[RMDB]
RNA sequence: GGGAACGACUCGAGUAGAGUCGAAAACCUGGGUUCGCCCAGGAAAAAAUCCUAAGUCGAUUGCGUGUUCUCUAGCGUGUCCAACAGCCGUCGGAAACGACGGACAUGGAUCGGGACACGCUAAUCGAUAUGGAAAAAAGGGCGUUUCGACGCCCAAUCGUGUAUUGUAGUUCGCUACAAUACACGAAAAAGAAACAACAACAACAAC
Reactivity to DMS in 0.01 (KOAc 150mM, MgCl2 10mM, bicine 150mM(pH8.5), 24C), signal-to-noise 2, nucleotides 027 to 156: c010c000u000g010g000g020u000u000c300g000c010c010c000a040g020g050a010a010a050a070a030a050u010c000c000u000a090a280g020u000c010g030a040u000u000g000c010g000u000g030u000u000c010u000c060u010a160g010c130g060u000g040u010c000c010a090a040c100a220g000c010c000g000u000c010g000g020a120a140a140c010g000a010c000g000g030a020c030a210u000g030g030a110u000c030g000g030g000a030c000a020c000g000c000u000a000a010u000c020g030a040u000a300u020g010g000a000a070a090a160a090a080g000g000g000c000g020u000u010u000c120g000a040c000g010c010c000c000a000a000
Reactivity to 2A3 in 0.01 (KOAc 150mM, MgCl2 10mM, bicine 150mM(pH8.5), 24C), signal-to-noise 4, nucleotides 027 to 156: c000c000u010g000g010g000u040u090c150g110c030c030c050a040g020g000a050a000a000a000a030a040u080c050c010u080a130a010g020u000c000g000a000u000u010g000c020g010u010g030u160u030c090u010c070u100a110g110c060g160u220g040u060c000c020a070a040c060a200g030c010c000g000u010c010g000g080a120a060a040c020g000a000c000g000g020a000c000a120u040g000g010a020u020c030g000g000g000a000c010a000c000g010c000u000a000a000u000c000g000a000u010a040u060g000g070a020a030a030a030a050a150g050g000g000c040g000u040u060u130c240g060a020c000g000c000c010c000a000a050
Record summary
The record gives the reactivity of an RNA of 207 nucleotides to DMS and 2A3. For 2A3, 5,800 sequencing reads were counted. The RNA was probed in 150 mM KOAc, 10 mM MgCl2 and 150 mM bicine (pH 8.5) at 24 C. It was measured as part of the RMDB library RNAMAK. For 2A3 the reverse transcriptase was SuperScript II with manganese.